[RMDB]
RNA sequence: GGGAACGACUCGAGUAGAGUCGAAAAAGUGGCCACUUACUGAGUAUGAUUUUACUGAUUAUAAGGUACAACUCUUUGAGAAGUACUUUAAAUAUUGGGAUCAGACGUAUCACGCAAAUUGCGUUAAGGUAAUCUCUAGGUUCGCCUAGAGAUUACCAAAAGAAACAACAACAACAAC
Reactivity to 2A3 in 0.01 (KOAc 150mM, MgCl2 10mM, bicine 150mM(pH8.5), 24C), signal-to-noise 1, nucleotides 027 to 126: a000g100u100g050g040c020c000a040c040u090u070a090c040u030g000a010g060u020a040u060g030a050u020u080u030u140a050c010u000g010a000u010u010a030u020a030a000g010g010u000a010c000a000a100c010u030c010u030u090u160g000a010g000a070a000g000u000a000c000u000u020u000a040a100a010u170a010u010u010g000g000g000a020u000c010a010g010a020c020g030u050a030u200c040a010c020g000c010a050a190a300u110u140g000c010g010u030u080a020a040
Reactivity to DMS in 0.01 (KOAc 150mM, MgCl2 10mM, bicine 150mM(pH8.5), 24C), signal-to-noise 1, nucleotides 027 to 126: a040g000u010g000g020c020c030a120c090u000u000a110c120u020g020a150g000u010a040u020g000a050u040u000u020u010a160c020u000g010a010u010u000a300u000a000a000g000g010u000a000c010a010a300c000u000c000u000u010u010g000a020g000a020a300g000u000a000c000u000u000u000a000a050a030u010a020u010u010g010g000g030a020u000c000a040g000a040c050g030u000a040u010c140a070c020g010c000a050a050a140u000u000g020c020g010u000u010a040a080
The record gives the reactivity of an RNA of 177 nucleotides to 2A3 and DMS.
The reactions ran in a buffer of 150 mM KOAc, 10 mM MgCl2 and 150 mM bicine (pH 8.5), at 24 C.
The 2A3 profile rests on 702 reads.
It was measured as part of the RMDB library 15KREP.
DMS adducts were read by reverse transcription with MarathonRT.